[RMDB]
Chemical mapping of a 177-nucleotide RNA with 2A3 and DMS. The 2A3 profile rests on 1,747 reads. Reactivities are given for positions 27 through 126. For DMS the reverse transcriptase was MarathonRT.
RNA sequence: GGGAACGACUCGAGUAGAGUCGAAAAGGAGAAGCGCGUCAGGGCCGGCGCGGACGCCGGUUCCGCGAUCGGCGGCGCCGCGGUGAACGAUCCGGCGACGGCGCCGAGGCUGAACUGCGUGAGGACGUGGAUCAAUUGGAUUCGUCCAAUUGAUCCAAAAAGAAACAACAACAACAAC
Reactivity to 2A3 in 0.01 (KOAc 150mM, MgCl2 10mM, bicine 150mM(pH8.5), 24C), signal-to-noise 1, nucleotides 027 to 126: g070g040a160g000a090a010g030c020g000c010g050u030c010a020g040g090g150c020c030g000g010c000g000c000g010g020a020c040g000c040c040g040g000u090u010c030c000g010c010g000a120u030c010g050g010c020g040g000c040g030c030c000g000c020g000g070u090g080a120a080c060g020a080u020c000c000g050g030c000g030a040c040g090g010c000g000c000c020g000a040g020g040c020u020g000a030a020c050u150g000c040g000u070g050a060g020g030a020c060g030
Reactivity to DMS in 0.01 (KOAc 150mM, MgCl2 10mM, bicine 150mM(pH8.5), 24C), signal-to-noise 3, nucleotides 027 to 126: g000g010a130g010a140a300g010c030g010c010g000u000c030a060g010g000g020c010c020g000g000c010g000c030g000g010a060c010g020c060c060g010g000u000u000c040c030g010c050g010a070u000c020g020g010c010g010g000c080g010c070c020g020c010g010g020u000g000a130a130c110g010a070u010c010c000g000g010c020g000a140c030g000g000c000g010c010c020g000a040g020g000c020u000g000a050a070c060u010g010c020g010u010g000a130g010g000a120c110g000